[RMDB]
Overview
Chemical mapping of a 170-nucleotide RNA with 2A3 and DMS.
RNA sequence: GGGAACGACUCGAGUAGAGUCGAAAAUCCCCUCGGAGAUGUUCCAGGUGGGUUCACAUCCCCAACCCGCGGGCCGGCUACUCUUCUUUCCCUUCUCUCGUCUUCCUCGGUCAACCUCCGGAGUUCCAAGCCGAUGACUUCGGUCAUCGGAAAAGAAACAACAACAACAAC
Reactivity to 2A3 in 0.01 (KOAc 150mM, MgCl2 10mM, bicine 150mM(pH8.5), 24C), signal-to-noise 4, nucleotides 027 to 129: u010c000c010c000c000u040c010g040g010a050g010a070u150g070u140u050c010c000a030g010g070u060g030g060g010u150u140c090a040c020a170u100c010c000c000c020a040a080c000c000c020g010c020g020g020g000c020c000g010g000c010u050a050c010u020c000u110u020c000u040u060u050c000c010c000u080u010c030u000c000u010c010g050u000c000u060u030c000c000u000c010g000g010u020c050a060a060c010c000u040c020c010g030g000a020g000u040u000c000c000a010a020g060
Reactivity to DMS in 0.01 (KOAc 150mM, MgCl2 10mM, bicine 150mM(pH8.5), 24C), signal-to-noise 7, nucleotides 027 to 129: u010c020c020c000c080u020c090g000g010a000g020a080u020g020u040u050c070c020a110g000g070u000g040g050g000u000u000c130a060c090a140u030c040c000c030c060a150a100c050c020c010g000c060g000g000g000c020c010g040g020c000u040a050c080u060c040u000u000c030u000u000u000c020c000c020u040u030c030u010c070u020c070g010u000c040u030u030c020c030u020c030g030g020u030c050a050a130c000c050u020c030c050g010g020a100g020u000u000c000c020a110a110g030

The reactions ran in a buffer of 150 mM KOAc, 10 mM MgCl2 and 150 mM bicine (pH 8.5), at 24 C. For 2A3, 14,371 sequencing reads were counted.